[RMDB]
RNA sequence: GGGAACGACUCGAGUAGAGUCGAAAAGAUAUGGAUAUACACGCAUCUAUGAAGAUACUCGGAAACGAGUAUUGGAGAUGGUGUGAUAUCCUAAGUCAAAACUAUCUUCUCUUCGGAGAAGAUAGAACCCCAUAAUAACGUUCGCGUUAUUAUGGGGAAAAGAAACAACAACAACAAC
Reactivity to DMS in 0.01 (KOAc 150mM, MgCl2 10mM, bicine 150mM(pH8.5), 24C), signal-to-noise 4, nucleotides 027 to 126: g000a020u000a240u020g000g000a030u000a040u010a040c010a030c030g010c080a050u010c010u010a280u030g010a240a200g000a000u000a000c000u000c000g010g000a050a060a070c000g030a010g010u000a010u000u000g000g000a010g020a010u000g010g030u000g010u000g000a040u020a000u000c000c000u000a010a120g000u000c010a080a090a100a200c000u000a000u000c000u000u000c000u000c000u000u010c250g040g000a010g000a010a000g000a000u000a010g000a060a120
Reactivity to 2A3 in 0.01 (KOAc 150mM, MgCl2 10mM, bicine 150mM(pH8.5), 24C), signal-to-noise 5, nucleotides 027 to 126: g010a000u020a020u080g000g000a010u020a010u050a090c060a000c120g300c080a070u000c030u090a300u180g010a000a000g000a010u000a010c000u010c000g000g000a020a020a010c000g010a010g020u010a000u000u010g000g010a020g000a030u100g030g020u010g000u030g020a010u000a000u030c000c000u000a040a000g030u020c030a010a010a120a220c000u000a000u000c000u000u000c000u000c000u040u090c300g160g000a010g000a000a010g010a000u000a000g000a010a010

An RNA of 177 nucleotides, treated with DMS and 2A3 and read out base by base. For DMS the reverse transcriptase was MarathonRT. The reactions ran in a buffer of 150 mM KOAc, 10 mM MgCl2 and 150 mM bicine (pH 8.5), at 24 C. Values cover nucleotides 27 to 126. It was measured as part of the RMDB library TTRDES.